RNA sequence: GGGAACGACUCGAGUAGAGUCGAAAACGAUUGCUUUUGGCAUUCUAUUGGUUACUUUGUUGAUCUAAACGGAACAGAAGUCAAAUCAAUCACCAGAGAGAAAAUGACCACUGCCAUGCAUAGUGAUCCUGAAUUGCAUAGGCAGAUGUCCAAGCAAGACAAAUCCGAGAUUCGUCUCGGAUUUGUCAAAAGAAACAACAACAACAAC
Reactivity to 2A3 in 0.01 (KOAc 150mM, MgCl2 10mM, bicine 150mM(pH8.5), 24C), signal-to-noise 2, nucleotides 027 to 156: c050g010a020u000u010g010c030u160u090u050u020g000g040c050a280u030u040c010u120a150u050u110g030g000u070u020a050c060u140u160u300g170u150u060g060a030u000c000u060a100a090a060c160g020g040a060a000c030a030g070a210a030g030u010c070a020a000a060u050c020a000a020u000c010a070c060c010a020g010a000g010a000g000a120a140a050a070u130g000a000c000c010a070c050u010g000c000c000a000u010g010c010a020u050a050g120u070g070a050u050c010c010u090g020a100a220u040u020g000c010a000u010a110g000g000c000a000g070a050u020g000u030c000c010a010a000g000c010a030a170